This 177-nucleotide RNA was probed chemically with DMS and 2A3.
RNA sequence: GGGAACGACUCGAGUAGAGUCGAAAACAGUCGCGAAGCGUAAAACCGUCAUGUGCGGUGACGAGAUUAAUCGCGGCACUCGGCAGACGACCAUUACGUUUAAAAACAUCGCUGGAGUCAGCAAAAACAGUGACCAUUAUUUCGAUAAUGGUCACUGAAAAGAAACAACAACAACAAC
Reactivity to DMS in 0.01 (KOAc 150mM, MgCl2 10mM, bicine 150mM(pH8.5), 24C), signal-to-noise 3, nucleotides 027 to 126: c200a120g010u000c020g030c050g010a030a080g010c010g010u000a020a050a090a100c060c010g000u010c010a080u010g020u000g030c090g010g000u000g000a030c010g000a110g020a090u000u010a110a100u000c000g030c000g030g010c000a050c030u010c070g000g000c020a050g000a030c030g000a120c070c060a100u000u010a060c090g000u020u000u000a040a060a140a090a110c120a070u000c090g000c080u000g000g000a300g000u000c060a010g000c030a060a050a060a070a120
Reactivity to 2A3 in 0.01 (KOAc 150mM, MgCl2 10mM, bicine 150mM(pH8.5), 24C), signal-to-noise 3, nucleotides 027 to 126: c000a010g010u010c010g030c030g040a020a030g050c020g020u050a030a040a070a100c010c000g020u030c060a250u230g110u180g080c040g020g000u020g010a010c020g010a010g010a110u160u170a140a100u040c020g010c000g010g010c000a030c020u050c040g060g000c030a030g000a050c020g090a130c030c030a040u080u110a050c060g000u050u020u080a060a120a010a000a010c030a030u110c090g000c020u030g050g010a030g040u110c040a020g020c040a060a070a020a030a010